[RMDB]
RNA sequence: GGGAACGACUCGAGUAGAGUCGAAAAACAACAUGCCCAGGUAGCCCAGACCUUCAAGGCUACGGUGCGUUGCGACGCACGGUCUAAUUCUUCACAACGACGUUCACCGCGUCUUCUUCCAUCCCCCUCCAGCGCACGAAGUUCGCUUCGUGCGCAAGAUAUUAGCAACGUUCGCGUUGCUAAUAUCAAAAGAAACAACAACAACAAC
Reactivity to DMS in 0.01 (KOAc 150mM, MgCl2 10mM, bicine 150mM(pH8.5), 24C), signal-to-noise 1, nucleotides 027 to 156: a070c110a140a160c110a120u010g020c000c030c030a120g050g030u010a000g000c030c000c200a100g020a070c050c030u040u000c060a070a190g010g030c010u000a050c020g010g040u020g020c010g020u010u020g010c190g020a150c030g010c020a050c050g000g020u000c060u000a060a170u000u000c090u000u000c070a200c100a030a110c050g010a120c000g000u000u010c080a150c040c040g000c020g010u000c010u000u000c060u000u000c020c020a220u010c030c010c000c020c000u010c050c030a190g020c000g060c000a020c000g010a040a050g030u010u010c300g010c030u000u000c000g020u000g000c000g020c020a000a020
Reactivity to 2A3 in 0.01 (KOAc 150mM, MgCl2 10mM, bicine 150mM(pH8.5), 24C), signal-to-noise 2, nucleotides 027 to 156: a010c110a040a020c080a160u160g030c010c030c040a050g020g010u010a000g000c000c020c200a000g000a020c000c000u010u030c000a000a010g000g000c000u010a000c000g020g000u010g000c010g010u050u070g070c190g090a010c000g000c000a000c030g010g010u000c000u010a010a090u090u100c090u130u150c080a060c040a220a040c130g060a000c000g100u170u190c060a030c090c070g020c020g000u010c020u050u010c020u090u020c040c090a130u090c070c000c000c000c000u000c000c010a000g020c000g000c000a000c000g000a000a000g010u030u080c080g040c050u000u020c000g010u000g020c000g000c000a000a000